This 177-nucleotide RNA was probed chemically with DMS.
RNA sequence: GGGAACGACUCGAGUAGAGUCGAAAAGAUAUGGAGCAAACACGCCCACACGUUUGACGUUUGUUGACACCUCGGAAACGAGGUGUCAACAAACCGAGUGUGGGAACUACGUGCUUGCUCCUAAGUCCUGAACUCUUUUGUUCGCAAAAGAGUUCAGAAAAGAAACAACAACAACAAC
Reactivity to DMS in 0.01 (KOAc 150mM, MgCl2 10mM, bicine 150mM(pH8.5), 24C), signal-to-noise 1, nucleotides 027 to 126: g010a140u020a300u000g000g030a020g020c010a000a020a000c000a000c010g000c030c000c010a010c000a000c010g010u000u010u010g030a120c300g010u000u000u000g050u000u000g000a020c000a000c000c000u010c050g010g010a120a130a290c010g000a010g000g070u000g000u000c000a020a000c000a000a020a010c010c020g000a050g050u000g030u010g010g030g000a010a050c100u050a300c000g000u000g000c040u000u000g010c000u000c000c000u020a000a050g000u000c040
For DMS, 1,328 sequencing reads were counted. Source: RMDB library TTRINS, as collected in RNAgym. Conditions: 150 mM KOAc, 10 mM MgCl2 and 150 mM bicine (pH 8.5), 24 C.